An RNA of 177 nucleotides, treated with DMS and 2A3 and read out base by base. Reactivities are given for positions 27 through 126. For 2A3, 5,481 sequencing reads were counted. 2A3 adducts were read by reverse transcription with SuperScript II with manganese.

[RMDB]
RNA sequence: GGGAACGACUCGAGUAGAGUCGAAAACAUUAGCUUCGGCUUCCCACCCUACGGCUUCGAAAAGCUGAGAUGAGCUCAGCAAGGGAACUCAAGAGACUCAACUCAGAGAACUCAGAGAGAGAAUAAAAGAUGUAAUAUGGUUCGCCAUAUUACAUCUAAAAGAAACAACAACAACAAC
Reactivity to DMS in 0.01 (KOAc 150mM, MgCl2 10mM, bicine 150mM(pH8.5), 24C), signal-to-noise 4, nucleotides 027 to 126: c100a110u000u000a060g010c020u000u000c130g020g020c040u000u000c020c000c010a290c030c040c020u010a070c070g000g010c030u000u000c080g010a100a100a080a130g010c000u000g010a030g000a190u000g000a130g010c010u000c010a030g000c210a090a040g000g010g010a080a120c020u000c030a140a160g010a050g000a120c020u000c030a050a080c060u000c050a080g010a070g000a060a110c040u010c010a050g010a120g010a090g010a080g000a090a060u000a020a060a090
Reactivity to 2A3 in 0.01 (KOAc 150mM, MgCl2 10mM, bicine 150mM(pH8.5), 24C), signal-to-noise 4, nucleotides 027 to 126: c020a080u130u150a000g010c010u040u040c150g060g000c000u020u010c040c010c000a040c020c010c000u060a060c060g100g020c000u070u090c090g050a040a060a050a040g000c010u010g010a010g000a060u120g040a030g030c010u000c020a000g000c010a010a010g050g000g040a090a060c000u010c050a070a000g020a040g040a200c010u010c030a040a090c030u020c110a040g020a010g020a140a030c010u020c090a010g020a010g000a010g010a020g050a180a070u150a080a100a020